[RMDB]
The record gives the reactivity of an RNA of 177 nucleotides to DMS. The reactions ran in a buffer of 150 mM KOAc, 10 mM MgCl2 and 150 mM bicine (pH 8.5), at 24 C. It was measured as part of the RMDB library TTRDES.
RNA sequence: GGGAACGACUCGAGUAGAGUCGAAAAAAAAAGAUAUGGACAUACCGAUAGGGCGGACACUAUAGCUCUCGGAAACGAGAGCUACGAAUGUCCGAACUACCCUUAAGGUAUGUCCUAAGUCAAAAAAGAUAGUGUGUCUGUUCGCAGACACACUAUCAAAAGAAACAACAACAACAAC
Reactivity to DMS in 0.01 (KOAc 150mM, MgCl2 10mM, bicine 150mM(pH8.5), 24C), signal-to-noise 1, nucleotides 027 to 126: a040a030a010a050a030g000a000u000a100u020g000g000a040c000a020u000a000c000c010g010a300u000a070g000g000g000c000g000g000a020c000a010c090u030a210u000a020g000c000u000c000u010c010g000g040a020a010a030c000g040a010g000a000g000c000u000a000c000g000a040a030u000g000u000c000c000g000a000a020c150u010a300c080c000c010u000u010a230a210g010g000u000a010u000g000u010c000c010u000a000a110g000u040c020a010a020a070a060a150a180